Chemical mapping of a 177-nucleotide RNA with 2A3 and DMS.
[RMDB]
RNA sequence: GGGAACGACUCGAGUAGAGUCGAAAAGAAAGAAAGAAAGAAGAAGGGGCUGAGUGGUAGGCGGUGCUGCUGUGCUCUGAUGAAGACCCAUGUGGCUAGCAACAGCGCUUACCUUUUGUCUCUGGAAGGUUCUGCUCUUUUUCGAAAGAGCAGAACCAAAAGAAACAACAACAACAAC
Reactivity to 2A3 in 0.01 (KOAc 150mM, MgCl2 10mM, bicine 150mM(pH8.5), 24C), signal-to-noise 2, nucleotides 027 to 126: g090a020a010a000g110a070a080a020g080a100a060a000g080a020a040g070a000a020g000g000g010g000c010u030g010a030g070u200g060g000u010a000g000g000c050g050g040u000g000c000u000g010c030u080g070u150g060c000u060c110u140g100a110u040g070a110a010g020a070c060c100c000a030u110g120u160g090g000c000u000a000g000c000a000a020c000a010g060c000g000c030u000u010a000c000c000u000u000u000u000g000u000c000u000c010u000g000g090a170a000
Reactivity to DMS in 0.01 (KOAc 150mM, MgCl2 10mM, bicine 150mM(pH8.5), 24C), signal-to-noise 1, nucleotides 027 to 126: g010a040a050a050g000a060a120a050g000a070a110a090g030a050a150g030a080a020g030g000g000g110c240u010g070a040g000u040g010g000u000a000g010g000c000g000g020u000g020c040u000g000c000u000g000u040g000c010u000c100u000g020a120u000g020a080a160g070a090c140c160c000a060u000g000u070g040g030c000u030a070g000c000a000a060c090a030g000c010g030c000u000u000a000c000c000u000u020u000u000g040u010c030u010c000u010g010g020a090a080
DMS adducts were read by reverse transcription with MarathonRT. The reactions ran in a buffer of 150 mM KOAc, 10 mM MgCl2 and 150 mM bicine (pH 8.5), at 24 C. 2A3 is a SHAPE reagent: it acylates the 2'-hydroxyl of flexible nucleotides of all four kinds.